Notes:
Chemical mapping of a 177-nucleotide RNA with DMS and 2A3. Values cover nucleotides 27 to 126. Conditions: 150 mM KOAc, 10 mM MgCl2 and 150 mM bicine (pH 8.5), 24 C. 2A3 adducts were read by reverse transcription with SuperScript II with manganese. DMS adducts were read by reverse transcription with MarathonRT.

RNA sequence: GGGAACGACUCGAGUAGAGUCGAAAAAUGCUUAAUGAUGUAGAGGUUGCGAUGAAUUUUGGAUUGUUCUCUCAAGUUAGCAGGCAGGUCACUUUUCUCUUUUACGAAGGACUUCGAGUGCACUGGGGGUAUUAUUUAUUUUCGAAUAAAUAAUACCAAAAGAAACAACAACAACAAC
Reactivity to DMS in 0.01 (KOAc 150mM, MgCl2 10mM, bicine 150mM(pH8.5), 24C), signal-to-noise 8, nucleotides 027 to 126: a060u020g010c030u010u020a060a080u020g010a120u010g000u020a040g010a070g000g010u010u010g010c040g010a040u010g020a080a090u010u020u010u010g010g010a060u000u000g000u000u010c020u000c020u010c060a060a130g010u010u010a050g000c040a030g000g010c050a040g010g010u000c010a030c050u000u010u010u020c050u010c030u010u020u010u010a090c120g010a050a060g000g010a060c090u010u010c060g010a070g010u000g010c050a060c040u000g000g020g010
Reactivity to 2A3 in 0.01 (KOAc 150mM, MgCl2 10mM, bicine 150mM(pH8.5), 24C), signal-to-noise 8, nucleotides 027 to 126: a000u070g010c020u060u070a070a010u100g080a040u110g040u110a020g010a030g040g080u120u100g040c020g020a030u030g050a120a220u120u100u120u100g110g040a060u040u040g030u060u010c020u000c000u000c030a030a080g020u050u030a030g040c020a000g050g030c020a010g010g050u020c010a050c070u040u040u110u010c020u020c000u020u140u040u080a090c090g030a030a030g050g020a030c000u040u030c070g040a020g030u010g020c040a010c060u040g010g040g050